The record gives the reactivity of an RNA of 207 nucleotides to DMS and 2A3. For DMS, 3,098 sequencing reads were counted. It was measured as part of the RMDB library M2RFPK. 2A3 adducts were read by reverse transcription with SuperScript II with manganese. The RNA was probed in 150 mM KOAc, 10 mM MgCl2 and 150 mM bicine (pH 8.5) at 24 C.
RNA sequence: GGGAACGACUCGAGUAGAGUCGAAAAGACGUAAUCCGCGCAAAUCCACAAACGCCAACGAUGAGCGUUUCGCUGUAGCCGCUUAAGGCAACAGCCGGGGCCGCCUGAGCCCGGUUACCAAAGACGGGAAACUCGAUGCCAUUCGUGGCAUCGAGAAGUUCCUCCUAUAAUUCGUUAUAGGAGGAACAAAAGAAACAACAACAACAAC
Reactivity to DMS in 0.01 (KOAc 150mM, MgCl2 10mM, bicine 150mM(pH8.5), 24C), signal-to-noise 2, nucleotides 027 to 156: g000a090c020g010u000a120a080u010c070c050g000c040g030c070a010a100a100u000c010c030a100c030a040a300a060c030g000c020c020a120a120c140g020a140u000g000a150g050c050g020u000u000u040c050g030c020u000g000u000a030g010c000c000g000c260u000u000a130a210g010g020c000a020a040c040a070g020c000c020g030g020g020g030c070c050g000c120c050u000g000a140g000c030c000c000g000g000u000u000a070c040c040a030a180a100g030a100c050g040g010g000a100a070a200c000u000c020g000a020u000g000c000c000a150u000u000c240g040u000g040g010c040a040u010c000g000a020g000a030a040
Reactivity to 2A3 in 0.01 (KOAc 150mM, MgCl2 10mM, bicine 150mM(pH8.5), 24C), signal-to-noise 7, nucleotides 027 to 156: g040a000c010g020u030a060a070u050c050c030g010c010g010c070a050a050a100u070c060c040a080c060a080a040a020c040g020c020c020a130a070c140g160a240u170g030a050g040c000g010u030u050u050c050g000c000u010g010u050a050g010c010c010g090c200u240u240a110a090g000g000c010a020a010c000a000g000c000c010g030g000g010g000c020c050g040c010c030u060g030a050g010c010c000c000g010g030u070u080a030c020c010a050a010a020g070a040c020g020g000g010a050a040a030c000u000c010g000a000u000g010c010c000a020u040u080c190g080u060g000g000c000a000u000c000g000a000g000a000a000